Description
Structure probing data (2A3 and DMS) for a 177-nucleotide construct. Conditions: 150 mM KOAc, 10 mM MgCl2 and 150 mM bicine (pH 8.5), 24 C. The data come from the RNA Mapping Database (RMDB), library RFM100. Values cover nucleotides 27 to 126. For 2A3, 1,383 sequencing reads were counted. The DMS profile rests on 2,115 reads. DMS (dimethyl sulfate) methylates the pairing face of unpaired adenines and cytosines.
[RMDB]
RNA sequence: GGGAACGACUCGAGUAGAGUCGAAAAACCGGUCUUCGGUCAAGGGUAUACGAGUAGCUGCGCUCCCCUGCUAGAACCUCCAAACAAGCUCUCAAGGUCCAUUUGUAGGAGAACGUAGGGUAGUCAACUUAGCAGUCUGGUUCGCCAGACUGCUAAGAAAAGAAACAACAACAACAAC
Reactivity to 2A3 in 0.01 (KOAc 150mM, MgCl2 10mM, bicine 150mM(pH8.5), 24C), signal-to-noise 2, nucleotides 027 to 126: a000c040c000g000g030u050c030u090u030c010g000g030u050c070a060a200g050g050g060u110a050u060a140c040g010a050g050u080a010g030c050u040g000c020g020c030u030c000c000c010c000u000g000c010u030a030g010a050a020c000c000u000c010c020a000a140a030c040a080a030g020c020u010c000u070c090a080a020g040g000u050c060c010a040u000u040u150g050u080a040g000g000a000g010a090a000c030g000u020a030g000g000g000u000a000g030u050c010a020a000
Reactivity to DMS in 0.01 (KOAc 150mM, MgCl2 10mM, bicine 150mM(pH8.5), 24C), signal-to-noise 2, nucleotides 027 to 126: a070c020c050g060g000u000c110u000u050c010g020g000u000c080a050a070g000g020g020u030a080u020a010c260g000a050g030u000a020g000c090u000g000c010g010c020u000c090c010c000c000u000g000c050u000a120g020a090a110c060c010u000c020c040a050a030a070c200a080a200g010c020u000c080u020c130a020a160g000g010u040c020c100a240u000u000u010g030u000a050g000g000a060g000a030a090c200g020u000a000g020g000g050u010a020g040u010c140a090a140